Source information
Chemical mapping of a 177-nucleotide RNA with 2A3 and DMS. The RNA was probed in 150 mM KOAc, 10 mM MgCl2 and 150 mM bicine (pH 8.5) at 24 C. For 2A3, 4,048 sequencing reads were counted.
RNA sequence: GGGAACGACUCGAGUAGAGUCGAAAAGCCUUCUUGUAUAAGCACUGUGCUAAAAUUACAGAAACUUUGAUUUCAUCUUGGUUUUUGUAAUAAUGCUAGCAGAGUACACACAAGAAGAAAAGUACUGCGAAGGCGAUAUAUUCGUAUAUCGCCUUCGAAAAGAAACAACAACAACAAC
Reactivity to 2A3 in 0.01 (KOAc 150mM, MgCl2 10mM, bicine 150mM(pH8.5), 24C), signal-to-noise 5, nucleotides 027 to 126: g060c010c000u000u000c000u000u010g020u000a080u020a260a060g040c030a020c010u070g020u030g190c000u010a100a000a040a050u010u000a000c000a000g000a000a000a000c010u020u010u040g010a030u080u240u300c160a110u020c020u000u020g010g010u010u000u000u000u000g010u010a000a000u030a050a030u190g110c060u030a000g000c000a000g010a010g070u030a020c040a000c000a000c000a040a000g000a000a000g020a010a040a000a000g080u070a070c060u050g050
Reactivity to DMS in 0.01 (KOAc 150mM, MgCl2 10mM, bicine 150mM(pH8.5), 24C), signal-to-noise 3, nucleotides 027 to 126: g000c200c000u000u000c010u000u000g010u000a070u020a120a120g020c070a030c010u000g000u000g000c000u000a030a060a150a050u000u000a010c010a000g010a000a030a010c000u000u000u000g000a010u010u030u030c200a060u020c000u010u000g010g000u000u000u000u000u000g000u020a030a010u020a060a070u070g010c230u010a020g010c000a000g000a000g000u000a060c040a110c170a000c000a010a000g000a000a000g000a020a070a030a090g000u020a110c070u000g000